Conditions: 150 mM KOAc, 10 mM MgCl2 and 150 mM bicine (pH 8.5), 24 C. This 177-nucleotide RNA was probed chemically with DMS. The DMS profile rests on 509 reads.

[RMDB]
RNA sequence: GGGAACGACUCGAGUAGAGUCGAAAAGGUAUCCACUUCGGUGGAUACCAAAGGCGAUCCCAGCAUCAGGGAACAACAACAUUAGAUGCAUCCCUAACGCCAAAAUUCCGGAUUUCGAUCCGGAAAAUUCUAAGCACUUCUUCGGAAGUGCUUAGAAAAAAGAAACAACAACAACAAC
Reactivity to DMS in 0.01 (KOAc 150mM, MgCl2 10mM, bicine 150mM(pH8.5), 24C), signal-to-noise 1, nucleotides 027 to 126: g010g000u000a000u000c000c000a020c000u000u020c180g000g010u000g000g000a000u000a010c000c010a000a050a090g050g020c040g000a070u000c040c000c000a150g000c120a050u000c090a160g000g000g000a040a080c180a090a270c090a010a180c080a080u000u000a130g000a080u000g000c050a180u000c000c000c000u020a220a160c070g000c010c000a210a060a080a060u000u000c000c000g000g000a090u000u000u010c190g010a070u000c010c020g010g000a000a010a010a050